[RMDB]
RNA sequence: GGGAACGACUCGAGUAGAGUCGAAAAGUGAAAACCCUGUUUCGGCGGGAAUUACUCCUGUCGGCCGCUGGGCACUCCCCACCGUCCUUUUUUGCCAGUUCGCUUCAGUUGUUUCCACCGGGGAUCCACAUCAAACAUUGUUCGCAAUGUUUGAUGUAAAAGAAACAACAACAACAAC
Reactivity to DMS in 0.01 (KOAc 150mM, MgCl2 10mM, bicine 150mM(pH8.5), 24C), signal-to-noise 1, nucleotides 027 to 126: g010u000g020a100a070a100a130c030c020c000u000g000u000u000u010c010g020g010c040g030g000g010a020a110u000u000a070c100u010c010c000u010g010u000c000g020g010c060c060g020c050u000g020g000g000c020a030c050u000c020c010c000c020a050c050c030g000u000c010c000u000u000u020u000u000u020g010c050c040a040g000u010u000c020g010c010u000u000c080a050g000u000u000g000u000u010u010c010c020a150c070c030g000g000g000g000a060u000c060c040